[RMDB]
An RNA of 207 nucleotides, treated with 2A3 and read out base by base. The data come from the RNA Mapping Database (RMDB), library M2RFPK. The 2A3 profile rests on 631 reads.

RNA sequence: GGGAACGACUCGAGUAGAGUCGAAAACCUGUUAUCUGACCAAUAACAGAAUGCACCACAGCGUAAAAUCAUCUGAUUGGGUGAGUUGGUCGCACCGCCAUUUGACGAACGAACGCCAAGCCUAUGCACUACGAGUAUGUGUUCGCACAUACUCGAACUACGCAGCAGUGUUCGCACUGCUGCGUAGAAAAGAAACAACAACAACAAC
Reactivity to 2A3 in 0.01 (KOAc 150mM, MgCl2 10mM, bicine 150mM(pH8.5), 24C), signal-to-noise 1, nucleotides 027 to 156: c000c000u000g000u000u010a010u010c020u000g000a030c000c000a020a020u000a000a030c000a000g120a130a090u140g040c020a010c070c030a000c070a020g010c010g040u070a030a090a120a040u070c030a010u000c100u160g010a230u090u220g090g000g010u020g020a030g070u040u020g000g000u010c020g020c020a030c000c000g070c040c000a000u000u000u030g090a040c060g060a160a000c040g040a080a000c020g000c000c040a070a000g010c020c030u090a070u140g060c010a040c090u150a010c070g000a000g010u000a000u000g050u000g020u000u060c280g000c030a000c000a000u000a020c000u000c000g000a020a020